Conditions: 150 mM KOAc, 10 mM MgCl2 and 150 mM bicine (pH 8.5), 24 C. Structure probing data (DMS and 2A3) for a 177-nucleotide construct. DMS adducts were read by reverse transcription with MarathonRT. It was measured as part of the RMDB library TTRINS. For 2A3 the reverse transcriptase was SuperScript II with manganese.
[RMDB]
RNA sequence: GGGAACGACUCGAGUAGAGUCGAAAAGAUAUGGAAACUUGAACGGUGAUGACCGAAAGAUUUAAUAUCUCACUCGGAAACGAGUGAGGAUAUUAAAUCUUUCGCAAGCCGAAAGUUUCCUAAGUCACAUACGCUAUAUCUUCGGAUAUAGCGUAUGAAAAGAAACAACAACAACAAC
Reactivity to DMS in 0.01 (KOAc 150mM, MgCl2 10mM, bicine 150mM(pH8.5), 24C), signal-to-noise 4, nucleotides 027 to 126: g010a030u000a300u010g000g000a010a010a000c000u010u010g010a200a140c010g000g040u000g010a150u020g020a150c300c010g000a000a000a010g000a010u000u000u010a010a000u000a000u000c010u000c000a000c010u000c010g020g020a110a080a230c010g000a020g010u010g010a030g010g020a000u000a000u000u000a000a000a010u000c000u000u000u000c000g010c080a050a260g020c000c000g010a020a030a000g000u000u000u000c000c000u010a010a070g000u000c050a300
Reactivity to 2A3 in 0.01 (KOAc 150mM, MgCl2 10mM, bicine 150mM(pH8.5), 24C), signal-to-noise 2, nucleotides 027 to 126: g010a010u120a030u170g000g020a000a000a000c000u030u040g110a300a070c070g020g020u040g070a300u190g070a070c060c060g000a030a010a000g000a000u000u000u000a010a010u010a000u000c020u000c000a000c010u000c000g020g000a190a050a070c010g000a000g030u000g000a000g000g000a000u000a000u000u010a000a010a000u000c010u000u000u020c000g070c010a030a030g000c010c000g050a030a010a010g000u010u030u000c000c000u010a220a020g070u050c030a010